[RMDB]
RNA sequence: GGGAACGACUCGAGUAGAGUCGAAAAGAGCAACUUAGGAUUUUAGGCUCCCCGGUGCGUCUCGAACCGCGCCGGGACAAACCCACAGGGGCUGGCGGUCCUGUGCGGUCAAAAUCUUUCCGCUGGAAUACCUAUCCCAGUUUCGACUGGGAUAGAAGGCUGAUUACUGAUUCGUCAGUAAUCAGCCAAAAGAAACAACAACAACAAC
Reactivity to 2A3 in 0.01 (KOAc 150mM, MgCl2 10mM, bicine 150mM(pH8.5), 24C), signal-to-noise 1, nucleotides 027 to 156: g020a000g000c000a000a200c130u010u060a090g080g050a070u050u040u040u110a090g000g030c000u000c030c000c000c030g000g000u000g010c000g020u020c040u000c200g090a080a010c030c000g000c000g030c000c010g010g030g010a010c000a000a070a000c000c000c000a010c000a000g030g000g000g030c010u020g010g000c000g000g000u030c000c000u000g000u000g030c160g000g020u060c030a000a000a070a070u020c050u130u070u050c010c000g000c010u000g010g060a100a050u120a280c020c000u000a000u000c000c000c000a000g010u000u040u120c120g140a030c010u000g010g000g000a000u000a000g010a000a020
Chemical mapping of a 207-nucleotide RNA with 2A3. The RNA was probed in 150 mM KOAc, 10 mM MgCl2 and 150 mM bicine (pH 8.5) at 24 C. It was measured as part of the RMDB library M2RFPK. As a SHAPE reagent, 2A3 marks flexible, mostly unpaired nucleotides at the ribose 2'-OH.